[RMDB]
RNA sequence: GGGAACGACUCGAGUAGAGUCGAAAAGAAAGAAAGACAGAAGCCGGCUCUGCUAGUUUCACGGCAACCACGUUGAAAUUACAACGAAAGAAGCUCGCACUCAACUUCAACGGCUUAACGAGUGCAAAAAAGAAGUAUCACUUCGGUGAUACUUCAACUCCCAUUACUGGUUCGCCAGUAAUGGGAGAAAAGAAACAACAACAACAAC
Reactivity to 2A3 in 0.01 (KOAc 150mM, MgCl2 10mM, bicine 150mM(pH8.5), 24C), signal-to-noise 2, nucleotides 027 to 156: g030a000a140a000g080a060a170a000g080a000c030a010g210a100a010g050c140c050g030g000c020u050c040u070g040c010u010a020g070u010u050u160c110a050c030g030g000c060a060a060c020c000a010c100g020u030u000g030a060a070a070u210u120a120c000a050a000c000g070a050a030a100g010a020a000g000c100u160c140g040c020a000c000u000c000a010a140c030u040u010c010a080a030c050g030g000c000u060u010a030a020c080g000a000g010u000g000c090a000a100a000a000a000a000g000a000a000g020u000a000u010c010a000c020u040u010c090g030g000u000g000a000u000a000c000u000u010c000a010a000
Record summary
Chemical mapping of a 207-nucleotide RNA with 2A3. For 2A3 the reverse transcriptase was SuperScript II with manganese. The data come from the RNA Mapping Database (RMDB), library M2RFPK. For 2A3, 1,035 sequencing reads were counted. 2A3 is a SHAPE reagent: it acylates the 2'-hydroxyl of flexible nucleotides of all four kinds.